Chemical mapping of a 207-nucleotide RNA with 2A3.
Reactivities are given for positions 27 through 156.
For 2A3, 1,050 sequencing reads were counted.
RNA sequence: GGGAACGACUCGAGUAGAGUCGAAAAGAUCGCAAACAGCAGCAGGUGAGUCCGCCUUAUGUGAAGGAUCGGCUGAAACACGAGGAAAUACUGAGCCAACGCAAGACGGUAGCCGAACAGUAGCAACAAAACGCUUACGUGUUCGCACGUAAGCGAAGGUAUUGCUGGUCUUCGGACCAGCAAUACCAAAAGAAACAACAACAACAAC
Reactivity to 2A3 in 0.01 (KOAc 150mM, MgCl2 10mM, bicine 150mM(pH8.5), 24C), signal-to-noise 2, nucleotides 027 to 156: g040a030u140c040g000c060a080a010a010c010a060g060c000a000g000c000a030g000g030u020g010a010g060u040c060c000g040c020c000u140u130a100u130g150u070g110a090a000g020g020a040u040c040g000g000c070u030g000a030a100a020c070a000c080g000a060g020g020a110a000a000u120a150c040u040g000a030g050c040c010a010a030c000g020c060a010a050g020a010c010g020g060u060a020g030c010c020g000a010a000c050a040g070u050a000g090c020a010a070c060a070a090a020a000c030g000c000u000u000a000c000g000u000g020u030u130c140g020c090a000c010g000u000a010a000g000c000g000a020a000